RNA sequence: GGGAACGACUCGAGUAGAGUCGAAAAACACGUGUAACAUUGAUGUUAGGGACUAAAUGUUUGUGUCCUCUGAAAUUCAUAUGUUGAAAUCCUAACUUCCCAUGUGAUGGUAUUAGGAGUUGGGGCUUCUGAGAAGUGAUUAGGUCAUGAGGGUCAAACGCGUUAGUAUUUUCGAAUACUAACGCGUAAAAGAAACAACAACAACAAC
Reactivity to 2A3 in 0.01 (KOAc 150mM, MgCl2 10mM, bicine 150mM(pH8.5), 24C), signal-to-noise 4, nucleotides 027 to 156: a010c080a020c020g090u100g040u110a080a020c050a100u040u120g050a050u070g120u110u090a140g030g030g030a010c060u120a050a060a160u210g060u080u100u070g070u040g000u010c000c010u070c030u030g070a060a070a000u100u050c050a010u080a050u240g040u060u050g050a050a040a030u010c010c000u010a030a010c000u050u050c040c010c040a030u090g120u100g080a140u030g020g000u090a050u110u100a100g010g000a020g000u010u030g000g000g010g020c030u040u030c060u110g100a110g030a130a030g000u020g040a070u020u120a020g070g010u000c020a030u120g030a000g030g020g000u020c000a110a000
Reactivity to DMS in 0.01 (KOAc 150mM, MgCl2 10mM, bicine 150mM(pH8.5), 24C), signal-to-noise 2, nucleotides 027 to 156: a070c010a030c070g010u000g030u010a030a030c050a100u000u010g020a070u010g000u000u000a100g010g020g000a150c020u000a090a090a080u000g020u000u010u000g000u000g000u010c010c010u000c040u000g020a050a080a090u000u000c030a030u000a050u000g020u000u000g010a050a080a120u000c030c020u000a020a040c010u000u000c010c020c010a140u000g020u010g010a120u000g020g030u000a100u000u000a050g010g000a080g020u000u010g000g010g030g010c020u000u010c090u010g000a090g010a120a120g020u000g000a130u000u010a080g000g020u010c030a040u000g010a070g020g020g040u010c040a040a060